Conditions: 150 mM KOAc, 10 mM MgCl2 and 150 mM bicine (pH 8.5), 24 C. Chemical mapping of a 177-nucleotide RNA with DMS and 2A3. It was measured as part of the RMDB library OK2TRN.
RNA sequence: GGGAACGACUCGAGUAGAGUCGAAAAAAGGAUGCGGUUCAGCUUAAGACUCAACAACUUCCAAAGACUGGCAUCAAGGGAGAUCACUUCACCGUUGACAGAGAAAAAGAUCUGAAGGAGACUCCAGAUCUCCCAAAUAGUUCGCUAUUUGGGAGAUAAAAGAAACAACAACAACAAC
Reactivity to DMS in 0.01 (KOAc 150mM, MgCl2 10mM, bicine 150mM(pH8.5), 24C), signal-to-noise 3, nucleotides 027 to 126: a090a080g000g030a070u000g020c140g010g020u010u010c080a050g000c030u030u000a110a070g010a070c020u000c100a040a060c080a080a120c060u000u000c050c080a090a070a100g000a100c050u000g010g040c050a070u000c040a110a100g000g000g000a050g000a110u010c100a060c050u020u010c020a050c070c080g010u000u000g000a110c080a120g020a150g010a080a100a080a120a080g010a100u000c040u000g000a010a040g010g000a180g010a080c030u000c020c010a100g010
Reactivity to 2A3 in 0.01 (KOAc 150mM, MgCl2 10mM, bicine 150mM(pH8.5), 24C), signal-to-noise 2, nucleotides 027 to 126: a010a000g090g000a020u050g000c010g010g050u090u120c030a020g000c050u070u040a140a010g030a090c040u020c050a010a040c000a040a030c070u050u010c020c030a020a030a020g060a080c040u050g100g020c000a010u020c010a100a070g060g000g000a030g010a070u100c030a020c110u030u020c020a030c040c020g050u010u030g040a050c030a030g110a030g030a050a170a060a020a040g030a070u050c070u090g010a010a010g070g020a080g010a040c030u000c040c000a030g010
For 2A3 the reverse transcriptase was SuperScript II with manganese.